[RMDB]
RNA sequence: GGGAACGACUCGAGUAGAGUCGAAAAGUACGCGCCGCCCUCGCACAGCAGCUUCGCCGCCUCCAUGCUUCCCAGCUCUUGGUCGAUCAGGAAGCCCUGCGACUCGGCGUAGAACACAGGUGCAGUGCAGACAAACACUUUUCGAAGUGUUUGUCUGAAAAGAAACAACAACAACAAC
Reactivity to 2A3 in 0.01 (KOAc 150mM, MgCl2 10mM, bicine 150mM(pH8.5), 24C), signal-to-noise 8, nucleotides 027 to 126: g070u050a030c050g010c000g000c020c000g030c010c010c000u020c020g020c000a030c010a030g080c010a020g010c010u060u050c030g020c020c000g020c010c000u010c020c010a030u070g010c020u030u040c000c010c000a020g010c010u010c010u060u060g070g010u060c030g050a130u090c020a010g050g020a060a040g010c020c000c000u020g010c020g030a030c010u010c030g040g000c020g020u030a030g040a130a020c100a000c000a060g050g020u060g030c030a010g030u040g070
Reactivity to DMS in 0.01 (KOAc 150mM, MgCl2 10mM, bicine 150mM(pH8.5), 24C), signal-to-noise 6, nucleotides 027 to 126: g010u030a040c060g010c010g010c030c010g000c030c020c020u010c070g030c060a050c120a090g030c070a080g000c070u010u000c050g000c010c010g000c040c020u010c030c040a050u010g000c070u000u000c020c010c010a130g010c050u010c040u000u020g000g020u010c060g010a110u020c080a090g010g010a110a110g010c060c030c030u000g000c050g010a080c040u000c050g010g000c040g000u020a060g000a080a080c080a080c050a050g000g010u010g010c020a080g010u020g010
Structure probing data (2A3 and DMS) for a 177-nucleotide construct. For 2A3 the reverse transcriptase was SuperScript II with manganese. Source: RMDB library OK1LIB, as collected in RNAgym. For DMS, 17,710 sequencing reads were counted. 2A3 is a SHAPE reagent: it acylates the 2'-hydroxyl of flexible nucleotides of all four kinds.